[RMDB]
RNA sequence: GGGAACGACUCGAGUAGAGUCGAAAAAGCCAUACCAUUACGAUGGUAUGGCAAGUCCGUGACGGCAAUGGAUCCCGCCUGGCCGAUGCCGAACUGCCGAUCUGGCUGAUGGUUCCUGCCCCGUCAAAAAACGUAAAGCACUUCGGUGCUUUACGAACUAACCCCUUACGUUCGCGUAAGGGGUUAGAAAAGAAACAACAACAACAAC
Reactivity to 2A3 in 0.01 (KOAc 150mM, MgCl2 10mM, bicine 150mM(pH8.5), 24C), signal-to-noise 1, nucleotides 027 to 156: a000g010c010c000a000u010a000c010c000a020u060u070a040c250g070a030u010g000g000u010a010u000g000g000c000a000a010g020u000c020c000g000u010g000a010c000g010g040c010a020a070u070g030g000a010u030c040c010c000g020c000c010u020g020g000c010c040g060a060u150g070c030c050g160a250a100c100u170g040c040c010g050a070u040c070u080g040g000c020u070g030a160u170g040g000u020u010c000c000u000g020c000c000c030c030g000u000c000a000a000a000a000a000a110c010g010u000a000a000a000g000c010a000c000u040u030c160g130g000u000g010c000u020u000u000a000c000g000a000a000